[RMDB]
Background:
The record gives the reactivity of an RNA of 177 nucleotides to 2A3 and DMS. Reactivities are rounded to 0.1 and cut off at 0 and 3.
RNA sequence: GGGAACGACUCGAGUAGAGUCGAAAAGAAAGUGUGCACCGAGAGUCCUUUUGUAUACGCAUGACUUCGGUCAUGCGCAGGACUUUUUGGACUCUCUUUAGUCCUGCGUAUACUGGUGCUCACGAAAGGGUAGGCGGUCCUUCGGGAUUGCCUACCCAAAAGAAACAACAACAACAAC
Reactivity to 2A3 in 0.01 (KOAc 150mM, MgCl2 10mM, bicine 150mM(pH8.5), 24C), signal-to-noise 8, nucleotides 027 to 126: g140a010a090a010g010u010g010u020g020c010a010c010c030g020a010g000a000g040u020c010c000u010u080u070u070g050u010a040u000a040c010g000c000a000u000g000a000c000u040u030c270g060g000u000c000a000u000g000c000g000c010a020g050g100a010c000u030u020u000u030u060g010g010a030c000u020c000u000c000u100u060u080a030g000u010c020c020u080g070c090g050u090a030u020a210c060u060g010g000u000g000c010u030c000a000c010g050a080a030a020
Reactivity to DMS in 0.01 (KOAc 150mM, MgCl2 10mM, bicine 150mM(pH8.5), 24C), signal-to-noise 4, nucleotides 027 to 126: g000a080a120a100g000u000g010u000g020c000a020c000c000g010a010g000a020g000u000c000c000u010u010u010u000g010u000a040u000a090c020g000c000a000u000g010a000c000u010u040c170g020g000u000c010a000u000g000c000g020c040a020g010g010a020c000u000u000u010u010u020g000g000a010c020u000c100u000c050u010u020u020a050g000u000c030c020u010g000c200g010u030a070u020a050c130u010g000g000u000g010c000u000c020a020c020g010a080a070a110

Values cover nucleotides 27 to 126.